[RMDB]
RNA sequence: GGGAACGACUCGAGUAGAGUCGAAAAGAACCAUCUUAUCUGGCGGGAUAUGAUGGGAAGAACCGCCGAGAAAUAAAGAACGUACGUUCGAGGCCCCGAUCGUACGGAAGGGCCGAAAAGAAAGAAAGGAAUUGAGUUACUUCGGUAACUCAAUUCCAAAAGAAACAACAACAACAAC
Reactivity to DMS in 0.01 (KOAc 150mM, MgCl2 10mM, bicine 150mM(pH8.5), 24C), signal-to-noise 1, nucleotides 027 to 126: g030a150a200c000c000a000u000c000u000u000a020u010c000u010g000g070c140g040g000g020a000u000a000u000g000a000u000g000g000g010a040a120g020a200a120c000c000g000c090c040g000a130g050a020a060a100u030a030a160a040g010a050a060c000g000u040a010c000g040u010u060c000g000a070g020g030c020c000c020c020g000a080u020c000g020u000a000c020g010g000a190a100g000g020g010c020c020g030a020a070a210a010g000a170a140a080g030a030a150a000
Reactivity to 2A3 in 0.01 (KOAc 150mM, MgCl2 10mM, bicine 150mM(pH8.5), 24C), signal-to-noise 2, nucleotides 027 to 126: g030a010a000c000c000a000u050c050u010u110a030u000c020u050g070g060c050g160g080g000a000u020a020u090g050a030u090g000g010g020a030a000g020a010a000c000c050g010c000c070g100a130g150a040a060a070u300a070a040a050g060a100a000c000g060u060a010c030g020u070u070c020g000a090g000g170c010c000c000c000g020a040u020c020g020u040a020c040g030g060a060a060g110g000g040c110c050g000a020a140a020a000g110a000a020a000g050a000a070a000